Source: RMDB library TTRINS, as collected in RNAgym. This 177-nucleotide RNA was probed chemically with 2A3 and DMS. 2A3 adducts were read by reverse transcription with SuperScript II with manganese. Values cover nucleotides 27 to 126. For DMS the reverse transcriptase was MarathonRT. The reactions ran in a buffer of 150 mM KOAc, 10 mM MgCl2 and 150 mM bicine (pH 8.5), at 24 C.

[RMDB]
RNA sequence: GGGAACGACUCGAGUAGAGUCGAAAAGAUAUGGAUUUAGCCGUGCGCUCCCAUCGAUCUUAAUCUUUAAUCGGAAACGAUUAAAGAUUAAGGGAGGGAGCGAACUACACGUGCUAAAUCCUAAGUCCAUUUGCUACUGGUUCGCCAGUAGCAAAUGAAAAGAAACAACAACAACAAC
Reactivity to 2A3 in 0.01 (KOAc 150mM, MgCl2 10mM, bicine 150mM(pH8.5), 24C), signal-to-noise 1, nucleotides 027 to 126: g060a040u150a090u270g000g010a010u050u010u010a010g000c000c000g040u010g030c040g020c000u010c040c010c000a220u300c010g010a020u000c000u000u010a010a010u000c000u000u010u000a010a010u010c010g010g040a140a060a060c000g010a000u000u000a000a010a010g010a020u010u000a010a010g000g000g000a020g040g000g010a020g000c000g000a000a000c000u150a040c020a000c000g150u260g000c010u020a000a000a000u000c000c010u000a080a020g010u000c010
Reactivity to DMS in 0.01 (KOAc 150mM, MgCl2 10mM, bicine 150mM(pH8.5), 24C), signal-to-noise 2, nucleotides 027 to 126: g000a110u020a300u000g000g000a000u010u000u000a030g030c010c010g000u000g000c000g000c000u000c000c000c010a300u010c240g000a020u000c030u000u000a030a000u000c000u000u000u000a030a000u000c040g000g000a160a080a300c010g010a000u000u000a000a000a000g010a010u000u010a000a010g020g020g020a030g050g000g010a000g020c020g000a010a000c100u020a300c010a010c010g000u000g020c000u010a000a000a000u000c000c000u000a030a100g010u000c030